This 207-nucleotide RNA was probed chemically with DMS and 2A3. The reactions ran in a buffer of 150 mM KOAc, 10 mM MgCl2 and 150 mM bicine (pH 8.5), at 24 C. The DMS profile rests on 9,231 reads.
RNA sequence: GGGAACGACUCGAGUAGAGUCGAAAAGAGUACAUAUGCCCAGCCUUACUGUCUCGGCUGGAUGCUUCGUGCAAAUGCUAUGUACGCCUACGUAUAUGUGCGUAGAUGCCUAUAUUUUCUCUCCUGAGAAAAUAUAGAUGCAUACAAAGGGGAUGCACUCAUUAAUGGGUUUCGACCCAUUAAUGAGAAAAGAAACAACAACAACAAC
Reactivity to DMS in 0.01 (KOAc 150mM, MgCl2 10mM, bicine 150mM(pH8.5), 24C), signal-to-noise 4, nucleotides 027 to 156: g010a090g020u000a020c010a070u000a040u010g010c010c000c010a070g000c010c010u000u000a130c120u010g000u010c120u010c170g010g050c000u000g020g010a120u000g020c050u000u010c150g010u000g010c030a070a100a200u000g030c010u000a050u000g010u000a020c000g020c040c010u000a020c020g010u000a100u000a110u010g020u010g040c000g010u000a030g010a100u000g010c020c000u000a010u000a010u000u000u000u010c000u000c010u010c250c220u010g020a030g000a030a000a020a000u000a000u000a030g000a130u010g020c000a030u000a080c070a040a080a100g050g010g000g020a290u010g000c060a220
Reactivity to 2A3 in 0.01 (KOAc 150mM, MgCl2 10mM, bicine 150mM(pH8.5), 24C), signal-to-noise 7, nucleotides 027 to 156: g060a020g010u020a000c010a010u040a030u290g010c020c000c010a010g000c010c010u200u220a180c110u270g110u220c120u070c160g010g000c010u010g010g020a020u090g000c010u060u160c150g120u180g030c010a040a040a130u200g010c000u010a010u000g010u010a000c000g040c000c000u020a020c020g040u030a070u030a050u300g150u060g050c010g010u010a030g020a090u040g010c000c000u000a000u000a000u010u000u000u000c000u000c020u070c040c190u210g000a000g000a000a000a000a000u000a000u000a000g000a010u120g000c000a000u020a090c040a020a120a020g020g010g000g010a010u080g040c050a010